This 207-nucleotide RNA was probed chemically with DMS and 2A3. The 2A3 profile rests on 989 reads.
RNA sequence: GGGAACGACUCGAGUAGAGUCGAAAAAGCCCUUCCAGGGCUCAGGGGAGCAACACCAGAAUGUCCGCUCAGUACUUGUGAGGACAGAGGCUGGAGAGAGGACUACCCAUUUACACUCAGAACCUCGAUUCCUCUCUCUGCUCUGUGCUGGAGAGUGAUUUCUGAUGCAAUUCGUUGCAUCAGAAAUAAAAGAAACAACAACAACAAC
Reactivity to DMS in 0.01 (KOAc 150mM, MgCl2 10mM, bicine 150mM(pH8.5), 24C), signal-to-noise 1, nucleotides 027 to 156: a000g000c000c000c000u010u010c110c100a060g030g020g020c030u000c020a010g010g000g010g010a090g000c030a060a080c040a100c030c030a130g000a160a100u000g020u000c050c030g010c000u010c000a140g070u000a080c120u010u000g030u020g000a100g000g010a050c020a100g020a050g020g040c060u020g010g000a020g020a060g020a050g000g020a170c120u000a150c070c040c050a230u000u000u000a110c070a060c020u010c020a100g000a030a070c010c010u010c040g030a200u010u000c030c010u000c010u020c010u000c010u000g000c020u010c060u000g010u010g010c020u000g000g010a120g010a060g000u000g020
Reactivity to 2A3 in 0.01 (KOAc 150mM, MgCl2 10mM, bicine 150mM(pH8.5), 24C), signal-to-noise 2, nucleotides 027 to 156: a000g000c010c030c000u040u080c080c040a080g040g010g020c030u010c030a030g100g000g000g010a020g000c040a000a020c030a050c040c040a000g050a040a090u090g000u010c020c040g050c040u020c030a040g040u080a150c090u100u170g050u090g110a040g000g030a000c000a010g000a020g070g030c180u150g020g000a000g000a000g020a000g050g000a040c030u110a120c020c050c040a030u110u150u170a050c100a040c030u130c050a080g070a180a130c020c070u090c100g040a140u090u000c010c000u010c020u010c010u000c050u030g000c000u000c010u080g020u060g030c010u030g010g050a050g020a030g030u080g030
Source: RMDB library OK3TST, as collected in RNAgym. Reactivities are given for positions 27 through 156. DMS adducts were read by reverse transcription with MarathonRT. High DMS reactivity at an A or C suggests that its Watson-Crick edge is free.